[RMDB]
RNA sequence: GGGAACGACUCGAGUAGAGUCGAAAAGAACACGUUCGAGAGAACUCGUGAGAUCGAUCGUUCGAACUCGAGAACGAGAGUGAGUGAUCGUACACGAUCGAACGAACGUACGUGAGAACGAGUUCGAACUCGAACACACUCUCGAUCUCGAACGUACUCCUAAACUAUACUUCGGUAUAGUUUAGGAAAAAGAAACAACAACAACAAC
Reactivity to 2A3 in 0.01 (KOAc 150mM, MgCl2 10mM, bicine 150mM(pH8.5), 24C), signal-to-noise 9, nucleotides 027 to 156: g080a050a040c050a010c050g000u000u010c000g000a010g010a010g010a110a060c060u030c070g010u030g020a040g010a070u030c020g010a020u070c120g020u040u000c000g010a030a020c010u000c010g020a040g040a070a010c040g020a050g020a010g100u040g020a060g010u090g030a030u030c010g030u160a080c230a070c150g030a040u040c040g040a060a040c020g010a030a000c020g030u130a020c020g030u050g040a100g040a100a030c010g000a000g010u020u030c010g000a020a020c020u010c020g010a050a020c050a000c000a020c080u000c000u010c010g020a050u030c000u000c000g000a010a000c000g010u010a040c020
Reactivity to DMS in 0.01 (KOAc 150mM, MgCl2 10mM, bicine 150mM(pH8.5), 24C), signal-to-noise 4, nucleotides 027 to 156: g030a120a130c110a050c090g020u000u000c010g010a070g000a140g000a100a090c070u000c030g000u020g030a110g000a160u010c010g000a080u000c110g020u010u010c000g010a080a050c030u000c020g010a100g010a110a110c020g010a150g010a190g030u000g020a120g020u010g010a080u000c030g080u010a110c070a120c030g000a100u010c040g010a080a140c000g000a060a090c050g010u010a060c010g000u000g010a200g010a200a210c030g010a090g010u000u000c020g010a030a070c050u000c020g000a020a090c040a270c040a030c020u020c020u000c010g000a270u010c000u010c000g010a070a010c030g010u000a050c060